[RMDB]
RNA sequence: GGGAACGACUCGAGUAGAGUCGAAAAAGCAGGAGUACGCUCCUGCAUGGGUAGACUAAUUGACCCCAACUGAAGUUCAAUUCUAACGUUAAAAGGAGUUUUAUAUGACUGGACGUACGCGUCCAGAUGACGAUUUCAUUCUUCGGAAUGAAAUCAAGCUUAAUGCGAUCUUCGGAUCGCAUUAAGCAAAAGAAACAACAACAACAAC
Reactivity to 2A3 in 0.01 (KOAc 150mM, MgCl2 10mM, bicine 150mM(pH8.5), 24C), signal-to-noise 1, nucleotides 027 to 156: a010g010c000a000g000g010a010g000u010a040c140g060c090u000c000c000u000g000c000a000u000g000g000g020u170a160g060a200c110u120a090a040u020u000g010a030c000c040c000c050a040a060c210u250g050a070a000g080u080u040c000a040a080u060u040c050u130a130a090c140g000u180u230a040a130a020a020g040g010a040g060u030u060u100u100a170u050a140u150g160a100c000u000g000g000a000c000g010u040a000c190g000c020g100u010c000c000a000g000a000u000g010a000c090g000a000u020u000u000c000a010u000u000c000u000u040c040g090g000a000a000u000g000a000a000a000u000c000a000a030